[RMDB]
RNA sequence: GGGAACGACUCGAGUAGAGUCGAAAAGCACGUCCGGUAAGCCCCGUGCGAACACUUGAGCUCCGGCUUGUCCGCUCUUGUGGAUUAGGACGUUCUAGCUCCGGCUUGGCCGCUAGUUCGUCCGAAACCGCAGCGCACGAUUCGUCGUGCGCUGCGGAAAAGAAACAACAACAACAAC
Reactivity to 2A3 in 0.01 (KOAc 150mM, MgCl2 10mM, bicine 150mM(pH8.5), 24C), signal-to-noise 1, nucleotides 027 to 126: g030c000a030c000g080u010c010c000g020g030u100a000a000g200c030c000c000c030g000u000g000c000g030a030a000c030a060c060u010u130g000a000g030c000u070c010c000g040g000c050u130u200g080u010c000c000g000c000u000c000u020u030g030u120g040g000a060u050u170a060g000g000a020c000g000u000u060c000u000a000g000c000u070c080c090g210g000c120u140u290g060g000c030c040g000c010u000a000g000u000u000c000g020u060c000c000g000a030a000a030
The record gives the reactivity of an RNA of 177 nucleotides to 2A3. The RNA was probed in 150 mM KOAc, 10 mM MgCl2 and 150 mM bicine (pH 8.5) at 24 C. Values cover nucleotides 27 to 126. It was measured as part of the RMDB library OK1LIB.